Description:
Chemical mapping of a 177-nucleotide RNA with 2A3 and DMS. The 2A3 profile rests on 4,906 reads. The data come from the RNA Mapping Database (RMDB), library OK1LIB. DMS adducts were read by reverse transcription with MarathonRT.
RNA sequence: GGGAACGACUCGAGUAGAGUCGAAAAGGGGAUGUGCUCACCCAAUUCAAGGUCGACGCGGCGGUGACCGGCUGCACCCGCGGUCCGACCGUCACGCGGUAUGAGGUCGAGCUGGGGCCCGGCGUCACAUACCUCGUGAUUUCGAUCACGAGGUAUGAAAAGAAACAACAACAACAAC
Reactivity to 2A3 in 0.01 (KOAc 150mM, MgCl2 10mM, bicine 150mM(pH8.5), 24C), signal-to-noise 5, nucleotides 027 to 126: g070g020g000g020a120u140g060u090g110c010u020c030a110c000c010c030a010a040u210u160c090a050a070g100g000u050c020g000a050c020g020c010g080g000c030g070g010u020g020a120c010c000g020g010c020u070g000c010a100c020c010c030g020c000g010g010u050c040c030g040a050c010c000g020u020c010a060c050g060c030g000g020u130a110u210g090a090g040g030u060c040g010a010g010c020u020g020g000g060g010c010c000c000g010g000c020g030u050c010a010
Reactivity to DMS in 0.01 (KOAc 150mM, MgCl2 10mM, bicine 150mM(pH8.5), 24C), signal-to-noise 3, nucleotides 027 to 126: g020g000g000g000a110u030g020u020g000c010u000c040a070c000c020c010a060a090u050u050c070a090a110g010g000u000c020g010a080c040g020c050g000g000c120g020g030u010g010a110c060c040g000g000c040u020g030c070a060c170c120c110g020c010g000g010u010c040c130g010a060c040c030g010u020c070a090c080g040c030g000g000u020a100u030g030a120g000g020u010c000g000a070g010c040u030g010g010g000g010c040c020c010g020g010c050g000u000c060a230